[RMDB]
RNA sequence: GGGAACGACUCGAGUAGAGUCGAAAACCUCCUCGAGUUUCUUGAUGGUUCUCUUGGCCUUCCGGAGCCUUCUCUCGAGAUCGUCCGCAUCCUUUCUUGCCUGCACCCACUUUUCGAGGAUGUCUUCCAGCACAGCUCUUCGGAGCUGUGAAAAGAAACAACAACAACAAC
Reactivity to DMS in 0.01 (KOAc 150mM, MgCl2 10mM, bicine 150mM(pH8.5), 24C), signal-to-noise 4, nucleotides 027 to 129: c060c020u000c000c000u020c030g000a090g000u000u000u000c030u050u050g000a040u030g010g040u050u000c020u040c040u000u000g010g000c050c000u040u050c060c050g000g020a160g000c090c020u040u050c040u020c020u020c010g020a040g040a130u030c020g030u000c000c000g050c140a120u040c080c050u000u000u030c070u060u030g000c000c030u030g030c100a180c020c040c030a140c070u070u060u050u030c040g000a070g040g010a070u020g030u000c080u000u030c030c050a120g000
Reactivity to 2A3 in 0.01 (KOAc 150mM, MgCl2 10mM, bicine 150mM(pH8.5), 24C), signal-to-noise 7, nucleotides 027 to 129: c010c000u010c000c020u020c020g040a040g010u030u090u020c060u060u130g090a120u130g050g010u090u020c030u000c000u020u110g050g000c000c020u080u040c030c030g060g010a010g030c020c000u060u050c030u020c000u020c000g030a050g040a180u020c010g010u010c000c000g060c030a110u080c020c000u060u080u050c010u030u080g040c010c020u020g020c030a070c020c010c000a060c040u040u070u040u030c040g020a030g020g000a010u050g010u020c030u040u030c020c010a020g050